Structure probing data (DMS and 2A3) for a 177-nucleotide construct.
The reactions ran in a buffer of 150 mM KOAc, 10 mM MgCl2 and 150 mM bicine (pH 8.5), at 24 C.
[RMDB]
RNA sequence: GGGAACGACUCGAGUAGAGUCGAAAAUGGUGAUGAUGUCGAAGUUGGUAGGAAGCAUGCUUCGACGCUGUGUCAACACUUGCGAGGACCAUAUCUGACGGAGCUGCUUGCCAAUGGCUGGCACCACUGCACUACCGGAUUUCGAUCCGGUAGUGCAAAAAGAAACAACAACAACAAC
Reactivity to DMS in 0.01 (KOAc 150mM, MgCl2 10mM, bicine 150mM(pH8.5), 24C), signal-to-noise 1, nucleotides 027 to 126: u000g040g020u000g000a140u050g040a130u030g010u000c000g020a170a230g040u000u000g010g060u040a220g010g010a070a010g010c050a080u010g010c000u000u000c010g000a110c130g000c070u000g010u010g000u000c090a050a080c040a060c120u000u020g000c090g000a160g000g000a100c060c070a040u030a200u000c070u000g000a050c020g000g000a070g000c010u000g000c020u000u000g020c040c010a070a080u010g000g000c120u000g000g000c000a020c070c040a000c150
Reactivity to 2A3 in 0.01 (KOAc 150mM, MgCl2 10mM, bicine 150mM(pH8.5), 24C), signal-to-noise 1, nucleotides 027 to 126: u120g000g000u010g030a070u050g000a110u070g000u020c000g020a050a030g000u000u020g000g000u050a150g000g230a020a010g000c020a010u270g000c020u000u020c000g020a040c030g000c010u010g050u080g000u080c020a150a150c030a080c090u100u210g020c120g050a050g020g030a020c070c010a060u050a070u210c070u070g050a060c010g000g000a000g030c030u010g000c040u010u020g000c010c000a000a000u000g010g030c050u020g030g000c000a000c030c010a020c000